[RMDB]
RNA sequence: GGGAACGACUCGAGUAGAGUCGAAAAUCUUGAUUUUCCUCUAAUACUAGCAGCACUAGAGGGCAUGACUAGUACCAAAUAACAGAAGUUACUCUUCUGUAGUCGUAGGGUGUCUCUCAACCUAUCCCCCGAUUAUACAAUUCGUUGUAUAAUCGGGAAAAGAAACAACAACAACAAC
Reactivity to 2A3 in 0.01 (KOAc 150mM, MgCl2 10mM, bicine 150mM(pH8.5), 24C), signal-to-noise 7, nucleotides 027 to 126: u030c000u040u160g040a050u050u030u050u030c030c010u000c040u080a120a100u040a120c030u020a010g020c030a000g000c020a020c090u090a090g040a140g170g050g000c050a090u040g060a160c010u010a000g020u020a040c020c050a100a080a110u150a100a020c010a010g020a020a000g040u100u170a100c060u050c010u190u010c000u010g020u020a020g060u020c050g040u040a040g010g060g020u020g020u000c040u010c000u010c090a050a070c010c010u060a110u140c020c010
Reactivity to DMS in 0.01 (KOAc 150mM, MgCl2 10mM, bicine 150mM(pH8.5), 24C), signal-to-noise 7, nucleotides 027 to 126: u000c070u000u000g010a080u000u000u010u000c010c000u000c030u000a060a140u000a050c020u000a070g010c050a090g010c070a080c110u010a080g010a090g000g010g010c080a040u010g010a170c050u000a030g010u000a110c130c080a050a070a120u010a100a040c020a010g000a010a010g010u000u020a110c270u000c000u000u000c010u000g010u000a060g010u000c080g010u000a090g000g010g020u010g010u000c080u000c050u000c060a120a060c060c030u010a080u010c090c080
The data come from the RNA Mapping Database (RMDB), library OK2TRN. This 177-nucleotide RNA was probed chemically with 2A3 and DMS. DMS (dimethyl sulfate) methylates the pairing face of unpaired adenines and cytosines. Values cover nucleotides 27 to 126. The DMS profile rests on 7,437 reads. The reactions ran in a buffer of 150 mM KOAc, 10 mM MgCl2 and 150 mM bicine (pH 8.5), at 24 C.